RNA sequence: GGGAACGACUCGAGUAGAGUCGAAAAACAGUGGUACGCCACUGAACCCAGCCUAGGGUGAUGUUGGCGGCAAGUGUGUGGUUGUGUCUGUCUCCAUUUGCUGUUGACAUCAGCCCCAGGCUUGCAACGGGGAGCUGGAAUUCGUUCCAGCUCCCCGAAAAGAAACAACAACAACAAC
Reactivity to 2A3 in 0.01 (KOAc 150mM, MgCl2 10mM, bicine 150mM(pH8.5), 24C), signal-to-noise 2, nucleotides 027 to 126: a000c010a000g000u030g000g020u140a110c250g020c050c000a000c000u000g010a020a020c010c000c000a020g000c000c010u000a000g020g020g000u000g000a010u000g020u010u050g040g000c010g020g000c010a000a000g000u020g020u050g010u010g120g070u150u060g070u120g120u240c170u190g080u030c000u010c030c000a000u020u000u030g000c000u000g010u030u020g010a010c000a000u010c010a030g050c000c000c000c000a000g010g000c000u010u170g020c020a090a060
This 177-nucleotide RNA was probed chemically with 2A3. For 2A3 the reverse transcriptase was SuperScript II with manganese. Values are in units of 0.01, from 0 to 300, in steps of 10. Source: RMDB library RFM100, as collected in RNAgym. The RNA was probed in 150 mM KOAc, 10 mM MgCl2 and 150 mM bicine (pH 8.5) at 24 C. Values cover nucleotides 27 to 126.